[RMDB]
RNA sequence: GGGAACGACUCGAGUAGAGUCGAAAAACCUCGGAAAUCUCAACAAGCAAAGUAUGGAUUGAUAGACGGCCCGAUUUCUGUAACUUUACCCAGAAAUAUGGGCGUCUUCCGUGCUGCUUGUUGGGGACAUUCCAUCUGUGUUCGCACAGAUGGAAUGAAAAGAAACAACAACAACAAC
Reactivity to 2A3 in 0.01 (KOAc 150mM, MgCl2 10mM, bicine 150mM(pH8.5), 24C), signal-to-noise 2, nucleotides 027 to 126: a010c010c010u020c040g070g100a060a110a160u020c010u000c010a010a020c000a020a000g000c020a300a030a030g010u000a010u010g000g030a010u010u220g090a050u100a200g020a030c060g300g130c030c010c000g000a000u010u010u000c010u010g080u080a040a140c070u200u220u170a080c000c010c010a000g140a010a000a000u170a190u150g020g000g000c000g000u010c010u000u010c000c010g000u000g020c010u010g000c010u000u000g000u000u000g000g010g010g010a000
Reactivity to DMS in 0.01 (KOAc 150mM, MgCl2 10mM, bicine 150mM(pH8.5), 24C), signal-to-noise 1, nucleotides 027 to 126: a050c010c000u000c220g030g010a090a100a070u000c000u000c000a010a050c000a000a010g000c010a150a100a060g010u000a000u000g010g020a110u000u010g000a090u000a030g000a020c000g010g000c000c000c010g000a020u000u000u000c000u000g020u010a140a110c300u000u010u020a130c190c200c000a020g000a020a020a000u000a090u020g010g020g000c000g000u000c000u000u000c000c000g030u000g010c000u000g000c020u000u000g000u000u010g000g020g000g010a170